[RMDB]
RNA sequence: GGGAACGACUCGAGUAGAGUCGAAAAAUGAUAUAACGGUGGGUUCCGCACCACCACAUAUGACUAUCGUCCGUGACGACAAUGUUCUCGGCGGUGAACCCCGAAUCAACGGGACGAGAGUCGGUGUUCGCCACGUCGCUGCCCGGGUGAUCGACGGAAGAACGAACGAAUUCGUUCGUUCGUUCUUAAAAGAAACAACAACAACAAC
Reactivity to DMS in 0.01 (KOAc 150mM, MgCl2 10mM, bicine 150mM(pH8.5), 24C), signal-to-noise 2, nucleotides 027 to 156: a090u000g020a160u010a110u000a030a070c040g000g050u000g020g060g030u010u010c140c170g010c100a160c010c000a020c000c000a120c150a080u000a050u000g000a090c040u010a050u000c010g000u000c010c010g020u000g000a120c030g010a070c020a080a120u000g030u010u000c030u000c050g010g010c080g060g030u010g000a130a080c020c000c000c010g020a080a100u000c090a080a130c020g010g000g000a070c070g000a180g000a100g010u000c030g000g000u000g000u000u000c070g010c050c010a080c000g020u000c020g020c060u000g000c040c010c040g020g000g000u000g000a050u000c000g010a070c070g020g000
Reactivity to 2A3 in 0.01 (KOAc 150mM, MgCl2 10mM, bicine 150mM(pH8.5), 24C), signal-to-noise 4, nucleotides 027 to 156: a000u090g030a030u070a000u030a170a080c110g010g000u020g010g010g010u120u080c020c020g000c010a020c000c000a000c070c010a040c030a030u220a070u160g130a070c040u080a040u070c030g060u020c040c040g080u060g050a020c030g010a030c050a100a150u090g020u090u040c030u000c040g020g030c040g040g010u020g010a050a060c000c040c000c010g040a010a010u070c050a060a140c050g100g000g100a040c070g080a080g010a010g070u040c030g010g000u020g010u020u050c030g010c000c010a040c060g040u020c020g010c040u100g030c030c010c000g060g020g000u050g020a040u070c080g060a070c040g020g060